Structure probing data (DMS and 2A3) for a 177-nucleotide construct. For DMS the reverse transcriptase was MarathonRT. The DMS profile rests on 4,412 reads.
[RMDB]
RNA sequence: GGGAACGACUCGAGUAGAGUCGAAAAACGAUGUCGUUCGCGACAUCGUAAAUUGUAUAAGCUUGCUUGAAGUCUACUUGGUUGUAAAGCGAGACAAGUCAGUGAGAGUCCUAUUCGUAGGACUCAAGAAUAUGACCUGGUUCGCCAGGUCAUAUUCAAAAGAAACAACAACAACAAC
Reactivity to DMS in 0.01 (KOAc 150mM, MgCl2 10mM, bicine 150mM(pH8.5), 24C), signal-to-noise 4, nucleotides 027 to 126: a020c000g000a000u000g010u000c010g010u000u010c250g020c010g010a010c000a000u000c000g030u000a010a040a060u010u000g010u000a080u000a120a220g000c010u000u000g000c010u000u000g000a100a180g010u000c010u010a100c110u000u020g000g000u000u000g000u000a070a030a040g000c040g000a020g010a110c040a030a100g000u000c070a040g000u010g000a130g010a020g000u000c000c000u000a020u000u020c170g030u000a000g000g000a010c000u000c000a020a070
Reactivity to 2A3 in 0.01 (KOAc 150mM, MgCl2 10mM, bicine 150mM(pH8.5), 24C), signal-to-noise 3, nucleotides 027 to 126: a000c000g010a000u010g000u000c010g020u030u050c180g000c000g080a000c010a000u010c000g000u010a000a020a020u100u100g130u020a100u020a160a060g040c010u010u010g020c000u010u010g050a080a010g010u070c010u020a100c100u270u210g110g020u090u060g070u140a030a000a020g010c040g020a010g020a030c030a050a030g060u100c080a030g030u030g170a140g010a010g050u000c000c000u010a030u020u060c170g040u010a000g000g030a000c010u010c000a000a010
The 2A3 profile rests on 3,232 reads.